[RMDB]
RNA sequence: GGGAACGACUCGAGUAGAGUCGAAAAAGCUCCUGUUUCGACAGGAGCUGUGUGGCUGCCCUUUUGUGCUCGAAGUAGAGUGCUUUCCUGCCGGAAAGGGCUUGAGAGCUUGAUUCGUCAAGCUCAAAUUCAGUACACGCUUCGGCGUGUACUGAAUAAAAGAAACAACAACAACAAC
Reactivity to DMS in 0.01 (KOAc 150mM, MgCl2 10mM, bicine 150mM(pH8.5), 24C), signal-to-noise 1, nucleotides 027 to 126: a010g010c000u000c000c000u010g000u000u000u010c140g020a050c010a010g010g010a010g020c010u000g000u000g020u010g020g020c050u000g000c000c000c000u000u000u000u020g000u010g010c000u010c030g000a130a140g010u010a130g010a060g010u000g020c060u010u000u000c010c000u000g010c050c020g010g010a020a020a040g000g010g000c010u000u000g010a180g010a030g010c000u000u000g000a010u000u010c220g020u000c000a000a000g010c000u000c000a010a060

An RNA of 177 nucleotides, treated with DMS and read out base by base. DMS adducts were read by reverse transcription with MarathonRT. Reactivities are given for positions 27 through 126. The RNA was probed in 150 mM KOAc, 10 mM MgCl2 and 150 mM bicine (pH 8.5) at 24 C. It was measured as part of the RMDB library M2PK50.